[RMDB]
RNA sequence: GGGAACGACUCGAGUAGAGUCGAAAAUUUGUUGCAGUUUCGGUUUGUGACCGACACUAACGGGUAGUUGGGGCACCUCGAAUACGCUGUUUUACUCGUUUUUGCGAUCACAAAUUCUGAAAUUGCAACGACGACAUACCGAGUUCGCUCGGUAUGACCUUCCACUGAGUUUCGACUCAGUGGAAGGAAAAGAAACAACAACAACAAC
Reactivity to 2A3 in 0.01 (KOAc 150mM, MgCl2 10mM, bicine 150mM(pH8.5), 24C), signal-to-noise 5, nucleotides 027 to 156: u050u040u180g010u000u000g020c010a010g000u000u000u000c010g010g010u000u000u000g010u000g010a000c020c020g070a100c000a000c010u000a010a000c000g000g020g010u020a060g100u040u170g150g020g020g010c020a080c020c050u160c070g080a080a060u170a130c060g000c020u060g290u160u070u030u010a000c000u000c010g010u000u000u000u010u010g010c010g000a010u000c000a000c000a000a010a020u240u080c060u090g010a010a000a010u010u000g010c010a000a000c000g000a030c010g010a000c000a000u000a000c000c010g000a000g000u050u100c210g020c090u000c000g000g000u010a000u010g020a010
Reactivity to DMS in 0.01 (KOAc 150mM, MgCl2 10mM, bicine 150mM(pH8.5), 24C), signal-to-noise 1, nucleotides 027 to 156: u000u000u020g000u000u000g000c020a130g040u000u000u000c010g000g000u020u020u000g000u000g020a070c000c010g010a100c020a040c040u000a040a070c030g030g010g060u000a060g040u010u000g030g030g030g090c060a060c100c080u020c160g040a220a140u000a090c110g030c030u010g040u060u000u040u000a020c050u000c010g050u000u000u000u000u000g050c000g010a020u000c030a060c010a020a060a050u000u000c060u030g020a160a020a040u000u000g030c000a010a000c020g020a040c080g020a240c010a040u000a000c000c000g010a030g000u000u020c300g040c010u010c000g000g000u000a010u020g000a130